[RMDB]
RNA sequence: GGGAACGACUCGAGUAGAGUCGAAAAGAGCGCUCAUGGAGACAUCGUGGCACGCAGCGAGAAGUGAACGCGACGAAACGUCCCGUCUCGUCGACCGGUGUGGGCGGACUCUCCCCACCUCGUACGGGCGCACCACGCGGGGCGGACCGGGGGUUCAGUGUAACUGUCUGUUCGCAGACAGUUACACAAAAGAAACAACAACAACAAC
Reactivity to 2A3 in 0.01 (KOAc 150mM, MgCl2 10mM, bicine 150mM(pH8.5), 24C), signal-to-noise 1, nucleotides 027 to 156: g040a030g000c060g020c020u010c070a040u160g050g000a090g000a130c010a040u060c030g010u080g030g100c100a010c070g090c080a050g000c030g090a030g020a170a040g050u140g060a100a000c060g020c010g040a040c000g020a100a050a070c070g030u000c000c020c010g030u060c040u010c010g060u010c020g020a110c040c040g010g010u100g000u100g050g040g010c080g110g100a200c020u010c020u080c010c000c000c010a030c000c010u020c030g040u120a060c040g020g010g060c090g000c020a070c010c000a050c080g060c060g000g000g000g000c000g010g070a080c010c000g000g000g030g000g030u030u040c070a060